Source: RMDB library M2RFPK, as collected in RNAgym. An RNA of 207 nucleotides, treated with DMS and 2A3 and read out base by base. For 2A3, 1,767 sequencing reads were counted. 2A3 adducts were read by reverse transcription with SuperScript II with manganese. The reactions ran in a buffer of 150 mM KOAc, 10 mM MgCl2 and 150 mM bicine (pH 8.5), at 24 C.
RNA sequence: GGGAACGACUCGAGUAGAGUCGAAAAAUGGUAGUUAGUCUACUCGCUAUCCUAGUUACUUUGUAGUAAUCUAAAGUGUGUGUAAACGGGCGAAAGUCUGUAAAAUACUGGGGACAUAGGGUCAACAAGAACUAGUAGACCUUCGGGUCUACUAGAAGACCUUAUACUUCUUCGGAAGUAUAAGGUCAAAAGAAACAACAACAACAAC
Reactivity to DMS in 0.01 (KOAc 150mM, MgCl2 10mM, bicine 150mM(pH8.5), 24C), signal-to-noise 2, nucleotides 027 to 156: a110u010g030g040u000a010g030u000u000a090g010u000c010u010a030c000u000c130g040c060u000a040u000c040c040u000a090g010u000u000a030c010u000u030u010g020u000a060g010u000a060a030u000c030u000a030a060a140g020u000g030u010g010u010g010u000a060a090a050c020g010g010g010c010g010a170a070a130g020u000c020u010g030u000a030a070a060a090u000a040c030u000g030g010g010g000a080c060a130u000a090g020g030g010u000c030a040a090c040a060a090g000a090a220c010u000a020g000u000a030g020a040c000c000u000u000c300g140g060g020u000c010u000a000c000u010a000g000a060a080
Reactivity to 2A3 in 0.01 (KOAc 150mM, MgCl2 10mM, bicine 150mM(pH8.5), 24C), signal-to-noise 3, nucleotides 027 to 156: a000u130g020g020u040a050g010u110u030a060g070u050c010u030a050c010u030c020g000c030u040a060u120c020c030u010a030g010u010u080a050c040u110u050u190g060u110a060g010u030a050a050u050c030u040a030a090a090g060u060g000u010g000u000g020u080a070a060a030c000g010g000g000c020g060a020a030a030g010u000c010u010g070u060a010a070a080a010u070a060c020u040g020g000g000g010a000c010a040u080a030g130g000g000u050c020a020a020c030a040a070g060a080a040c000u000a000g000u000a000g000a000c010c000u050u020c110g050g000g000u000c010u000a000c000u000a000g000a000a000